An RNA of 177 nucleotides, treated with DMS and read out base by base.
The DMS profile rests on 994 reads.
Values cover nucleotides 27 to 126.
The reactions ran in a buffer of 150 mM KOAc, 10 mM MgCl2 and 150 mM bicine (pH 8.5), at 24 C.
Source: RMDB library M2PK90, as collected in RNAgym.
RNA sequence: GGGAACGACUCGAGUAGAGUCGAAAAGUUGCCCGAGAAGAGAUCACACAGAUGAGACACAACGAGCGAUGUCUCAUCACUUGGUUUUCGACAAGUGACGAGUCGUUCCCAAAAUCGCUCCAAUGAAGAAGCGAUAGAAAUUCGUUUCUAUCGCUUCAAAAGAAACAACAACAACAAC
Reactivity to DMS in 0.01 (KOAc 150mM, MgCl2 10mM, bicine 150mM(pH8.5), 24C), signal-to-noise 2, nucleotides 027 to 126: g040u010u010g030c280c010c010g020a090g000a110a140g020a110g010a080u010c090a110c190a070c160a120g000a020u000g030a040g000a010c000a010c130a050a070c290g010a020g020c020g010a040u000g010u000c010u010c000a020u010c010a120c020u000u020g000g020u000u000u000u000c010g000a020c020a060a070g010u010g010a140c040g000a010g020u000c010g040u000u010c010c000c000a010a040a060a030u000c010g010c030u010c010c190a110a090u010g000a180a140